The record gives the reactivity of an RNA of 177 nucleotides to DMS and 2A3. Source: RMDB library OK2TRN, as collected in RNAgym. The RNA was probed in 150 mM KOAc, 10 mM MgCl2 and 150 mM bicine (pH 8.5) at 24 C.

[RMDB]
RNA sequence: GGGAACGACUCGAGUAGAGUCGAAAACGCGGCAGGAGGCAAGCCAGUCUGCUAAACAUGCAGCUAACAUGGGACUGUCCGCGACGCGACGUGGCCCCUGGUGCAUCGGUCAGGACGGUGUAGCGGCGAUUCCCAAGUAAUUCGUUACUUGGGAAUCAAAAGAAACAACAACAACAAC
Reactivity to DMS in 0.01 (KOAc 150mM, MgCl2 10mM, bicine 150mM(pH8.5), 24C), signal-to-noise 9, nucleotides 027 to 126: c050g020c040g000g010c030a060g010g010a170g020g000c050a050a060g010c050c040a060g010u010c010u000g000c020u010a090a110a150c300a090u010g000c010a020g000c180u010a070a080c080a110u000g000g000g000a120c030u000g000u010c010c020g010c070g000a090c080g000c040g000a060c080g010u010g010g010c030c010c030c040u000g000g000u000g000c030a050u000c030g010g000u010c110a100g010g000a090c030g010g010u000g010u000a040g010c040g010g000c170
Reactivity to 2A3 in 0.01 (KOAc 150mM, MgCl2 10mM, bicine 150mM(pH8.5), 24C), signal-to-noise 8, nucleotides 027 to 126: c020g010c000g030g000c030a030g010g120a090g070g050c030a040a010g050c000c000a020g050u040c010u010g000c030u080a120a200a050c070a060u200g000c010a000g000c050u100a060a030c030a200u090g020g000g050a030c020u030g030u090c000c010g010c040g030a020c020g010c030g040a120c060g050u080g080g020c000c000c000c010u050g040g070u060g030c010a040u040c030g010g070u100c060a070g110g090a050c030g000g030u040g010u040a040g060c010g040g000c020